Record summary: The record gives the reactivity of an RNA of 207 nucleotides to 2A3.

[RMDB]
RNA sequence: GGGAACGACUCGAGUAGAGUCGAAAAUGAAGUAUGAGUGGUUUGAGUUCAUUUUACCAGAAGGCAACUUUUCAGCCACCAUGACGAUCGACCUGAUGAACAAUGCCAUCAUUGACAACUACCUGGAAAUUGGCAGACAGAAUGGAGUGCUGGAAAGCCCGGCUUAUUAUUUCGAUAAUAAGCCGGGAAAAGAAACAACAACAACAAC
Reactivity to 2A3 in 0.01 (KOAc 150mM, MgCl2 10mM, bicine 150mM(pH8.5), 24C), signal-to-noise 1, nucleotides 027 to 156: u020g000a090a040g010u110a010u100g050a010g110u040g050g020u010u150u090g080a030g020u010u000c070a050u080u030u050u160a080c000c020a040g040a060a070g090g000c030a040a040c010u030u020u030u030c040a090g000c000c000a030c050c000a000u080g020a040c070g160a160u050c060g120a100c020c010u070g030a020u010g010a080a020c020a100a090u100g000c010c000a000u060c040a020u040u090g090a030c000a030a080c060u210a120c000c110u020g010g050a070a000a070u100u090g030g020c020a010g030a100c000a030g020a000a010u000g000g030a040g050u020g010c030u040g000g020a000a020a000g100

The reactions ran in a buffer of 150 mM KOAc, 10 mM MgCl2 and 150 mM bicine (pH 8.5), at 24 C. For 2A3 the reverse transcriptase was SuperScript II with manganese.